[RMDB]
RNA sequence: GGGAACGACUCGAGUAGAGUCGAAAAAAAAGAUAUGGAGCCUUUGUCAGCGAUAGUGGAGAGGAGCUCGGAAACGAGCUCUACCCACCUCCACGAAUCGCUUGGAUUUAAGGCUCCUAAGUCAAAAUCAUUCCUAUACCUUCGGGUAUAGGAAUGAAAAAGAAACAACAACAACAAC
Reactivity to DMS in 0.01 (KOAc 150mM, MgCl2 10mM, bicine 150mM(pH8.5), 24C), signal-to-noise 2, nucleotides 027 to 126: a100a010a070a160g010a020u000a300u000g000g030a000g000c000c000u000u000u000g020u000c000a020g020c000g000a000u000a150g020u000g000g020a020g020a110g020g000a020g070c000u000c000g000g020a060a040a210c030g010a040g010c000u000c000u010a020c010c030c080a300c130c000u000c000c050a010c010g000a120a140u000c000g010c020u000u020g000g020a000u000u010u000a010a000g000g010c000u000c000c000u000a000a060g020u000c050a130a080a120a190